[RMDB]
RNA sequence: GGGAACGACUCGAGUAGAGUCGAAAAGCGAGACAGUAGGGUUGCUUCUCUGUGGGAGUGUUCAAUGUCUGAAGGGAAGGAGCCUUUAGUACGAGAGGAACGGGGGUUCGUGACCUCUAGUUUAUCGAUUUAACCUCUAUUUCGAUAGAGGUUAAAUAAAAGAAACAACAACAACAAC
Reactivity to DMS in 0.01 (KOAc 150mM, MgCl2 10mM, bicine 150mM(pH8.5), 24C), signal-to-noise 9, nucleotides 027 to 126: g010c050g010a120g010a060c070a100g020u010a040g010g000g010u000u000g000c020u000u000c010u000c020u000g010u050g010g010g000a050g010u010g010u020u020c250a100a080u050g000u000c000u000g010a180a030g000g000g000a040a030g000g000a040g000c010c010u000u000u000a080g010u010a060c050g000a120g000a080g000g010a110a040c040g000g000g010g000g000u000u010c170g010u010g000a080c010c000u000c030u000a060g010u000u000u000a090u010c080g010
Reactivity to 2A3 in 0.01 (KOAc 150mM, MgCl2 10mM, bicine 150mM(pH8.5), 24C), signal-to-noise 9, nucleotides 027 to 126: g080c040g010a040g040a070c040a060g140u140a040g010g000g040u030u040g100c010u010u010c010u010c010u020g070u210g080g050g010a080g020u130g100u180u230c120a140a110u180g110u060c010u060g060a050a030g000g000g010a020a020g020g040a020g010c000c000u030u020u010a040g010u040a030c050g010a020g010a030g120g050a040a010c020g000g020g010g000g000u060u070c040g040u100g160a070c000c000u000c010u010a060g000u000u050u020a130u080c040g010